[RMDB]
Structure probing data (DMS and 2A3) for a 170-nucleotide construct. Source: RMDB library 15KLIB, as collected in RNAgym. Conditions: 150 mM KOAc, 10 mM MgCl2 and 150 mM bicine (pH 8.5), 24 C. For 2A3, 1,025 sequencing reads were counted. For 2A3 the reverse transcriptase was SuperScript II with manganese.
RNA sequence: GGGAACGACUCGAGUAGAGUCGAAAAUCGUCCUUUGGGAUUAUGAACGUAGCAAUAUUUAUGGUACUGCUACUAUUGGUGUAUGUAAGUACACUGAUAUUGAUGUUAAUUCAGCUUUGAAUAUAUGAUACUGCCCCCUUCGGGGGGCAGAAAAGAAACAACAACAACAAC
Reactivity to DMS in 0.01 (KOAc 150mM, MgCl2 10mM, bicine 150mM(pH8.5), 24C), signal-to-noise 2, nucleotides 027 to 129: u010c070g030u000c050c040u000u090u000g060g000g000a090u090u030a060u000g000a130a190c110g000u000a080g020c030a060a000u000a000u000u000u150a200u030g000g000u030a000c040u000g000c050u000a030c000u060a000u030u030g110g000u050g050u040a070u010g060u060a120a120g040u000a000c030a050c070u030g040a010u000a090u000u000g000a100u150g000u000u060a060a120u010u010c000a020g010c120u020u020u000g020a050a090u040a000u000a000u000g000a160u050a020
Reactivity to 2A3 in 0.01 (KOAc 150mM, MgCl2 10mM, bicine 150mM(pH8.5), 24C), signal-to-noise 1, nucleotides 027 to 129: u010c000g000u030c000c000u020u070u010g010g000g050a000u040u000a010u230g240a260a000c030g000u170a000g000c000a000a000u000a060u090u260u210a040u280g010g000u060a000c010u010g000c000u000a000c010u000a000u000u000g000g000u000g000u000a050u000g040u000a220a160g000u000a000c010a000c000u000g000a000u020a000u060u080g210a120u010g080u300u210a000a010u030u020c000a130g040c140u040u050u010g000a030a000u060a010u000a000u000g100a050u010a030